[RMDB]
RNA sequence: GGGAACGACUCGAGUAGAGUCGAAAACAUCCAGUGUUCGCACUGGAUGAGAGGAAUCUGGAUCGGCAAACUACAUACCAAAAGCUGAGCUCGAAAGAGCAACGAUUUCGUCGUUCGCGACGAAAAACAAGCGUUAUACCUUCGGGUAUAACGCUUGAAAAGAAACAACAACAACAAC
Reactivity to DMS in 0.01 (KOAc 150mM, MgCl2 10mM, bicine 150mM(pH8.5), 24C), signal-to-noise 1, nucleotides 027 to 126: c000a000u000c000c000a000g020u010g010u020u020c200g000c000a000c000u010g000g010a000u000g000a090g000a150g000g000a090a100u000c020u010g000g010a090u000c000g000g010c010a050a120a100c040u010a030c080a080u010a170c080c080a060a010a070a140g020c050u020g000a230g020c000u000c000g000a080a070a130g000a020g020c020a070a090c230g000a230u000u000u000c010g020u000c010g040u000u020c240g000c000g010a020c010g000a000a000a010a090a180
Reactivity to 2A3 in 0.01 (KOAc 150mM, MgCl2 10mM, bicine 150mM(pH8.5), 24C), signal-to-noise 2, nucleotides 027 to 126: c000a000u000c000c000a000g000u010g040u050u070c200g010c100a000c020u030g000g020a000u010g000a000g070a010g000g090a080a030u020c050u150g050g030a090u050c030g030g010c030a060a060a060c060u150a060c040a150u170a080c000c060a060a050a050a020g040c050u040g040a020g000c000u000c020g030a100a030a050g010a000g020c010a030a040c030g040a050u030u060u010c000g000u000c000g020u020u060c220g020c000g090a010c000g020a040a000a000a010a000

Annotation:
This 177-nucleotide RNA was probed chemically with DMS and 2A3. The data come from the RNA Mapping Database (RMDB), library M2PK50. For 2A3 the reverse transcriptase was SuperScript II with manganese. The reactions ran in a buffer of 150 mM KOAc, 10 mM MgCl2 and 150 mM bicine (pH 8.5), at 24 C. 2A3 is a SHAPE reagent: it acylates the 2'-hydroxyl of flexible nucleotides of all four kinds.